The record gives the reactivity of an RNA of 177 nucleotides to 2A3 and DMS. For DMS, 2,259 sequencing reads were counted. For 2A3, 2,456 sequencing reads were counted. 2A3 adducts were read by reverse transcription with SuperScript II with manganese. It was measured as part of the RMDB library OK2TRN. The reactions ran in a buffer of 150 mM KOAc, 10 mM MgCl2 and 150 mM bicine (pH 8.5), at 24 C.
RNA sequence: GGGAACGACUCGAGUAGAGUCGAAAAGCAUCGCGCGGCGCUAUAUAUACGAUAUAUGCAUUAAUGCUAAUCGGCCGCGCGUAGCAUCGUAGCGCAUGCAUCGCGAUAUAUGCGCGCCGUAGCCGUAGACACUGUGCAAGUUCGCUUGCACAGUGUCAAAAGAAACAACAACAACAAC
Reactivity to 2A3 in 0.01 (KOAc 150mM, MgCl2 10mM, bicine 150mM(pH8.5), 24C), signal-to-noise 2, nucleotides 027 to 126: g010c000a040u090c010g000c010g020c010g080g000c030g000c210u030a030u020a020u010a010u020a300c020g000a020u030a010u050a010u200g000c010a010u040u290a280a070u180g020c010u010a050a050u060c010g110g000c000c000g050c010g020c020g000u000a000g000c000a050u010c060g030u060a010g010c000g000c040a030u090g020c040a020u080c080g030c090g130a000u000a010u020a020u130g000c000g000c000g000c010c020g000u060a050g060c020c010g020u030a070
Reactivity to DMS in 0.01 (KOAc 150mM, MgCl2 10mM, bicine 150mM(pH8.5), 24C), signal-to-noise 2, nucleotides 027 to 126: g030c020a200u000c090g020c000g010c000g010g000c010g000c120u010a040u010a050u000a110u000a300c030g000a000u000a040u000a070u000g000c010a050u000u000a120a120u000g020c000u000a080a040u000c020g010g000c030c070g000c050g020c080g060u000a050g030c020a050u010c090g000u000a060g010c060g000c060a030u000g010c080a030u000c080g000c080g020a110u000a080u000a020u010g010c070g010c000g010c040c010g000u010a100g000c000c070g000u010a210